[RMDB]
RNA sequence: GGGAACGACUCGAGUAGAGUCGAAAAACGAUAACGAGGCGCUCGCUAUUGCUGCGUAACUGACGGCCUGACGGUCUGACGUUACAAAGCUAAAGCGCGGUUCGACCCCACCGGGCAACAGAAGGGGAAAGGCGACCCCGUUUCGACGGGGUCGCAAGUUAUAUUACAAGUUCGCUUGUAAUAUAACAAAAGAAACAACAACAACAAC
Reactivity to 2A3 in 0.01 (KOAc 150mM, MgCl2 10mM, bicine 150mM(pH8.5), 24C), signal-to-noise 1, nucleotides 027 to 156: a000c030g020a050u080a120a010c020g040a060g120g020c080g010c030u020c020g000c050u160a080u270u200g010c010u000g000c000g000u000a000a000c000u010g040a010c000g000g010c000c010u120g160a130c180g000g000u000c010u040g000a020c030g000u000u000a000c000a000a010a000g000c000u000a020a000a000g010c000g000c010g000g000u090u120c070g100a120c000c010c000c020a000c000c000g100g160g000c010a040a000c000a000g010a010a050g020g000g020g000a070a040a090g070g020c030g010a000c110c000c020c020g000u040u050u070c060g010a010c030g000g030g000g000u000c000g000c000a000a000
Record summary:
Conditions: 150 mM KOAc, 10 mM MgCl2 and 150 mM bicine (pH 8.5), 24 C. Chemical mapping of a 207-nucleotide RNA with 2A3. The 2A3 profile rests on 1,007 reads. Reactivities are given for positions 27 through 156.